RNA sequence: GGGAACGACUCGAGUAGAGUCGAAAACACAUCAAGUAUGUGAACAUGAGCUGAAGGGGCUCGGCUCGUGUCAGGAGGAGCAGGAAAGGAGGCCAGGGAGGCUGGCACAUCUGAAGGGUCUCCAGGAGCACACACAAGAAUCGGACUUGAUUUUAAGGAGUUCAGUUUAGUUCGCUAAACUGAACUCAAAAGAAACAACAACAACAAC
Reactivity to 2A3 in 0.01 (KOAc 150mM, MgCl2 10mM, bicine 150mM(pH8.5), 24C), signal-to-noise 2, nucleotides 027 to 156: c050a000c010a010u040c060a090a070g060u100a100u120g030u030g070a060a020c010a070u030g000a020g000c030u060g010a110a050g000g040g000g000c010u010c030g010g000c000u020c010g010u010g030u050c050a020g010g040a030g020g010a020g000c040a000g010g090a060a050a000g030g020a050g010g010c000c000a000g000g030g010a050g040g010c020u020g030g000c030a010c010a070u070c060u100g050a050a060g050g000g000u000c010u000c040c000a030g000g040a030g000c130a010c010a000c000a000c000a070a050g050a040a020u060c080g050g020a070c040u040u080g040a090u090u030u110u180a110a040g110
This 207-nucleotide RNA was probed chemically with 2A3. Conditions: 150 mM KOAc, 10 mM MgCl2 and 150 mM bicine (pH 8.5), 24 C. Source: RMDB library OK3TST, as collected in RNAgym.